[RMDB]
RNA sequence: GGGAACGACUCGAGUAGAGUCGAAAAGAUAUGGAAAGGUGAACUACUCGGUUUGUGAGCGAAGAACCAGCUAUUGUCGGAAACGACAAUAGCUGGGGAGCUCAUGAUCGAGCACCUUUCCUAAGUCCAAAGGUCUUAGGUUCGCCUAAGACCUUUGAAAAGAAACAACAACAACAAC
Reactivity to DMS in 0.01 (KOAc 150mM, MgCl2 10mM, bicine 150mM(pH8.5), 24C), signal-to-noise 2, nucleotides 027 to 126: g010a080u000a230u010g010g000a000a000a000g000g020u000g010a060a050c080u020a300c010u000c010g000g010u000u000u000g090u000g010a010g020c010g000a120a190g030a160a220c010c000a010g000c000u000a010u000u000g040u000c010g000g000a070a090a240c000g050a000c000a000a000u000a010g010c010u000g000g000g020g000a060g000c010u000c000a000u000g000a000u000c000g000a020g020c000a010c000c010u000u000u000c000c000u000a010a110g000u010c030
Reactivity to 2A3 in 0.01 (KOAc 150mM, MgCl2 10mM, bicine 150mM(pH8.5), 24C), signal-to-noise 1, nucleotides 027 to 126: g000a040u160a050u110g030g010a040a000a000g020g000u040g000a070a050c080u200a070c000u300c020g010g130u010u230u300g070u060g000a000g010c080g060a300a080g030a290a070c000c020a000g000c000u030a000u020u000g000u000c020g030g050a120a020a110c030g030a010c020a000a000u000a000g020c000u000g020g000g010g000a040g000c010u020c010a000u000g030a000u020c000g070a000g000c020a010c000c000u000u000u020c010c000u000a000a000g030u000c020
Chemical mapping of a 177-nucleotide RNA with DMS and 2A3. It was measured as part of the RMDB library TTRINS. The DMS profile rests on 2,361 reads. The RNA was probed in 150 mM KOAc, 10 mM MgCl2 and 150 mM bicine (pH 8.5) at 24 C.